[RMDB]
RNA sequence: GGGAACGACUCGAGUAGAGUCGAAAAUUCAAACAUGCAUUGGGAUGUGAUUAUCUGUAUAACCCUUUUGUUAUAGAUAUACAACAAUGGGGUUACACAGGGUCUCUAAGUUUCAAUCAUCAUAUGCAUUGUAAUAUACAUCGUAAUGAGCAUGUUGCCGGUUAGGCAUUUUCGAAUGCCUAACCGGAAAAGAAACAACAACAACAAC
Reactivity to 2A3 in 0.01 (KOAc 150mM, MgCl2 10mM, bicine 150mM(pH8.5), 24C), signal-to-noise 1, nucleotides 027 to 156: u070u050c000a000a080a070c000a000u010g010c000a000u000u050g080g040g000a000u000g010u040g000a010u020u220a120u140c020u000g000u000a000u020a050a000c000c000c000u010u000u010u010g040u010u040a050u070a090g160a030u200a050u050a260c120a020a000c000a000a000u010g000g000g000g000u000u000a000c000a010c000a010g070g000g010u010c030u000c000u180a110a000g000u050u190u040c010a010a000u040c020a060u030c020a020u220a020u300g000c020a000u010u010g000u040a000a070u180a030u050a060c030a020u030c130g200u140a130a080u030g040a070g050c040a040u050g030u030u080g020
Source information:
Conditions: 150 mM KOAc, 10 mM MgCl2 and 150 mM bicine (pH 8.5), 24 C. Structure probing data (2A3) for a 207-nucleotide construct. The 2A3 profile rests on 431 reads. 2A3 adducts were read by reverse transcription with SuperScript II with manganese.